[RMDB]
RNA sequence: GGGAACGACUCGAGUAGAGUCGAAAAGGUGUACUCACUGUUCUUACUGUCAAAUGCACUGUAACAUCCAUGUUAAUUUGAUACAUGCUCUUGGAUUUGAAUUCUUGUUCAACUGUCUCCGUUCUUUAUAUAUAAUUUGCCACUGGUCCCAUCCUGAUCACGACGUGGUAUUCGUACCACGUCGUGAAAAAGAAACAACAACAACAAC
Reactivity to 2A3 in 0.01 (KOAc 150mM, MgCl2 10mM, bicine 150mM(pH8.5), 24C), signal-to-noise 1, nucleotides 027 to 156: g050g000u010g000u030a020c050u060c140a110c010u020g040u030u000c030u020u040a150c080u090g060u000c020a050a000a040u110g050c020a050c100u100g080u210a170a110c000a080u040c110c000a030u040g020u000u080a210a060u050u110u100g080a050u020a050c010a030u050g010c020u040c000u130u020g030g010a000u070u000u090g110a070a090u150u060c050u020u140g020u020u010c010a030a020c030u050g160u050c010u000c000c030g050u020u090c040u030u170u000a130u000a040u000a000u020a210a300u100u110u020g030c000c030a020c060u040g020g000u010c000c030c030a010u020c000c000u030g050a020
Conditions: 150 mM KOAc, 10 mM MgCl2 and 150 mM bicine (pH 8.5), 24 C.
Chemical mapping of a 207-nucleotide RNA with 2A3.
For 2A3, 381 sequencing reads were counted.
The data come from the RNA Mapping Database (RMDB), library OK3TST.